[RMDB]
Annotation: Chemical mapping of a 177-nucleotide RNA with DMS and 2A3. The DMS profile rests on 1,294 reads. Conditions: 150 mM KOAc, 10 mM MgCl2 and 150 mM bicine (pH 8.5), 24 C. Values cover nucleotides 27 to 126.
RNA sequence: GGGAACGACUCGAGUAGAGUCGAAAAGGUUCGAUUCCCCUCACCUCCACCCAAGGGCAUUCCGCUGAGUGUUUUUGGAUGGGGGUGUACUGGUCUCGACAGGGCGGACAAAGGUGCGCAGGCAACUUACGUCCUGCCUUUUCGAAGGCAGGACGUAAAAAGAAACAACAACAACAAC
Reactivity to DMS in 0.01 (KOAc 150mM, MgCl2 10mM, bicine 150mM(pH8.5), 24C), signal-to-noise 1, nucleotides 027 to 126: g020g070u000u020c020g000a220u010u010c010c000c050c230u000c040a040c030c010u000c000c080a030c040c000c000a000a000g010g020g030c020a010u010u000c010c300g040c300u070g040a040g020u000g050u000u000u000u000u000g000g000a060u000g000g000g000g000g000u000g010u000a000c110u050g000g030u000c010u000c050g020a060c090a010g000g000g000c030g000g030a080c130a020a200a020g010g010u000g000c010g000c290a060g000g000c030a080a000c050u000
Reactivity to 2A3 in 0.01 (KOAc 150mM, MgCl2 10mM, bicine 150mM(pH8.5), 24C), signal-to-noise 2, nucleotides 027 to 126: g080g020u020u050c010g020a130u020u040c020c000c000c000u010c010a000c000c000u000c000c000a010c000c000c000a000a000g030g000g010c000a000u000u010c010c050g190c300u250g010a000g020u000g050u010u000u000u000u010g000g000a000u000g000g000g000g000g000u000g010u000a000c000u010g030g030u030c000u000c020g010a030c050a090g060g050g000c010g000g000a050c030a070a010a060g150g010u030g020c020g000c030a000g110g000c000a010a020c050u020